[RMDB]
RNA sequence: GGGAACGACUCGAGUAGAGUCGAAAAUUUGGAAUAACAUAUAGUUCUUUCUUUUCCAUAUCCAUAAAGCUUACAUUGCGUAGAAAAUCAUGACUACGUUUUUCAUCGGCGAAUGUAUACAUCAUUGGGUUAAGAAACUGAUACACGUUUUUAUAGGUAGCUUGAGUAGAUUCGUCUACUCAAGCUAAAAAGAAACAACAACAACAAC
Reactivity to DMS in 0.01 (KOAc 150mM, MgCl2 10mM, bicine 150mM(pH8.5), 24C), signal-to-noise 2, nucleotides 027 to 156: u000u020u020g020g000a190a090u000a080a120c080a110u020a190u010a210g010u000u020c020u000u000u000c020u000u000u030u010c030c000a100u010a120u010c020c000a070u010a070a090a080g020c020u000u000a040c010a050u000u010g000c040g000u000a180g020a050a060a080a080u000c100a070u000g010a210c140u030a080c080g000u000u000u000u000u000c050a170u000c110g070g010c040g020a060a050u000g000u000a030u000a030c040a100u000c030a090u000u000g020g030g010u000u000a030a100g000a050a030a080c090u010g000a120u000a080c070a040c130g010u000u000u000u010u000a080u000a120g020g000
Reactivity to 2A3 in 0.01 (KOAc 150mM, MgCl2 10mM, bicine 150mM(pH8.5), 24C), signal-to-noise 3, nucleotides 027 to 156: u100u020u070g030g030a070a090u100a180a030c020a020u270a030u070a280g050u040u040c000u040u070u010c010u020u030u010u020c020c020a030u040a040u110c010c010a020u080a060a160a020g020c020u020u030a020c000a080u010u060g020c000g010u010a040g020a020a130a040a070u170c040a080u100g060a060c020u010a020c050g000u010u000u000u040u130c040a060u080c030g070g000c040g060a070a000u020g020u010a030u020a090c060a030u130c030a020u060u150g100g020g000u060u040a050a030g010a060a080a030c080u080g050a050u090a120c100a020c140g020u000u000u020u060u090a140u080a100g100g050

An RNA of 207 nucleotides, treated with DMS and 2A3 and read out base by base. For 2A3 the reverse transcriptase was SuperScript II with manganese. The RNA was probed in 150 mM KOAc, 10 mM MgCl2 and 150 mM bicine (pH 8.5) at 24 C. High DMS reactivity at an A or C suggests that its Watson-Crick edge is free.